The data come from the RNA Mapping Database (RMDB), library RFM100. Chemical mapping of a 177-nucleotide RNA with DMS and 2A3. 2A3 adducts were read by reverse transcription with SuperScript II with manganese. The 2A3 profile rests on 375 reads. For DMS, 1,892 sequencing reads were counted. Values cover nucleotides 27 to 126.

RNA sequence: GGGAACGACUCGAGUAGAGUCGAAAAAGGAAUCUGUGUGGUCAACUGUUCUCUUGCCAGGACACAGGAAACGCGUUGGUAUAAAUUCUUGUUUGGAGGCUGCAAAAAGCGUCGCACAGAGAAGGGGUGCUCCAAAGGGAUUCGUCCCUUUGGAGCAAAAAGAAACAACAACAACAAC
Reactivity to DMS in 0.01 (KOAc 150mM, MgCl2 10mM, bicine 150mM(pH8.5), 24C), signal-to-noise 2, nucleotides 027 to 126: a020g010g000a040a170u040c010u000g010u010g010u010g010g000u090c110a100a230c050u010g000u000u050c010u000c010u000u000g000c040c100a040g010g010a080c100a060c020a030g000g040a060a030a010c020g000c120g040u020u000g000g000u110a110u000a040a140a100u000u000c020u000u020g000u000u010u010g000g000a100g040g020c040u030g000c170a030a070a070a130a080g030c100g040u000c020g020c030a040c000a050g000a080g010a080a130g000g000g000g000
Reactivity to 2A3 in 0.01 (KOAc 150mM, MgCl2 10mM, bicine 150mM(pH8.5), 24C), signal-to-noise 1, nucleotides 027 to 126: a000g050g010a010a070u000c000u030g050u000g000u030g080g010u050c110a050a050c080u000g040u110u080c010u000c000u120u150g000c000c000a130g000g000a000c000a000c000a070g020g000a030a040a050c020g070c100g070u030u210g000g000u030a180u080a270a110a000u110u210c000u070u110g020u090u100u150g040g000a020g080g010c000u010g040c030a000a080a020a020a020g140c030g020u060c000g000c030a030c000a000g000a000g000a000a010g000g000g000g000